RNA sequence: GGGAACGACUCGAGUAGAGUCGAAAAGGCAGAAAAAAUCGAAAACGGUAGCAUUCAAAAUGAAAACAUCCGAAAGCGAAGCGAUAAUAAUUGGGGAGAACGUGUGAAUAAUAUGCGGGCAACCCGCCAAAGCUUAGAUUUUCGAAUCUAAGCUUUGAAAAGAAACAACAACAACAAC
Reactivity to 2A3 in 0.01 (KOAc 150mM, MgCl2 10mM, bicine 150mM(pH8.5), 24C), signal-to-noise 6, nucleotides 027 to 126: g030g000c030a020g190a050a070a000a000a010a020u060c030g050a050a010a010a110c030g030g020u040a030g040c010a010u000u080c030a050a090a050a080u110g050a040a070a020a050c020a040u030c010c020g030a040a010a010g050c030g040a030a010g050c050g040a020u030a140a020u090a050a050u220u150g010g000g020g000a030g020a030a020c030g020u040g010u010g060a000a020u110a100a020u120a060u190g010c000g010g000g010c040a070a020c000c010c000g000c010
Reactivity to DMS in 0.01 (KOAc 150mM, MgCl2 10mM, bicine 150mM(pH8.5), 24C), signal-to-noise 7, nucleotides 027 to 126: g020g000c040a090g010a000a030a060a040a090a090u020c030g000a080a070a080a160c070g000g010u000a070g000c080a060u000u010c080a070a080a080a040u020g000a070a050a090a100c080a040u010c030c120g000a050a090a070g010c060g000a070a100g010c080g010a050u020a040a040u020a050a080u020u020g000g010g010g010a190g010a030a020c070g010u020g020u010g010a080a070u030a070a080u020a040u000g010c010g010g000g010c100a050a140c060c000c020g030c150
The record gives the reactivity of an RNA of 177 nucleotides to 2A3 and DMS. Conditions: 150 mM KOAc, 10 mM MgCl2 and 150 mM bicine (pH 8.5), 24 C.